RNA sequence: GGGAACGACUCGAGUAGAGUCGAAAAGGCUCUCUGCUGAGGGCGCAGCCGUCACGCAAAUACUGCUUAAAAGAAAGACUGAGGCCUCAGGUUGGUAAGCGAAACGCAUUGCCGACACUGUGCCUCACAGCACCCUUGUGUUCGCACAAGGGUGCUGAAAAGAAACAACAACAACAAC
Reactivity to 2A3 in 0.01 (KOAc 150mM, MgCl2 10mM, bicine 150mM(pH8.5), 24C), signal-to-noise 2, nucleotides 027 to 126: g130g000c000u020c000u010c020u050g160c130u180g030a040g030g050g000c040g000c060a000g000c040c050g080u080c050a020c080g050c010a030a140a000u140a090c050u040g080c030u180u170a110a100a000a000g160a050a040a030g030a030c090u000g000a000g020g000c020c070u180c040a000g030g000u000u010g050g000u030a010a000g020c010g090a250a240a000c230g020c120a300u000u060g020c040c000g010a000c110a040c210u000g020u020g000c000c000u000c000a020